[RMDB]
RNA sequence: GGGAACGACUCGAGUAGAGUCGAAAACUGCAGCCGCCGGGGCAGCAGCCGUCGCAGCUGCUGAGACGCUACAACGUCGCCAAAGUGCCCGCCAGCCCUACGCUGAGCAGCUCGGCGGAGUCCCCCGAGGGAGCGAGCCUCUACGACGAGGUGCGGGUGCAAAGCUUUAAUUCGUUAAAGCUUUGCAAAAAGAAACAACAACAACAAC
Reactivity to DMS in 0.01 (KOAc 150mM, MgCl2 10mM, bicine 150mM(pH8.5), 24C), signal-to-noise 1, nucleotides 027 to 156: c020u000g020c040a080g030c000c020g000c030c070g000g000g030g000c020a080g020c050a070g060c030c020g000u020c090g010c110a060g030c000u000g060c000u040g030a100g020a060c000g000c010u030a120c050a110a050c000g000u000c000g000c050c050a080a140a160g020u000g000c000c000c010g030c020c020a140g000c040c040c040u000a110c060g000c040u000g000a060g000c010a080g010c010u020c030g040g030c030g000g010a140g000u000c060c030c010c020c040g000a090g020g030g000a090g010c030g000a110g000c020c000u000c030u000a070c120g000a170c090g000a070g020g050u020g030c000g040g010g020
Reactivity to 2A3 in 0.01 (KOAc 150mM, MgCl2 10mM, bicine 150mM(pH8.5), 24C), signal-to-noise 1, nucleotides 027 to 156: c020u040g000c000a020g040c000c040g180c100c080g060g040g000g070c030a020g060c020a000g000c020c000g060u060c030g030c120a030g000c000u000g020c000u000g020a020g000a010c040g040c070u240a090c080a170a020c080g030u020c010g050c030c040a080a130a020g110u070g010c010c010c010g020c030c010a040g000c020c010c060u060a030c080g000c040u040g060a010g000c000a000g000c000u020c040g000g000c020g000g020a030g060u080c000c010c000c010c000g020a060g000g010g010a020g000c020g000a000g000c000c000u020c000u020a100c070g160a020c020g000a000g000g020u020g050c000g040g010g000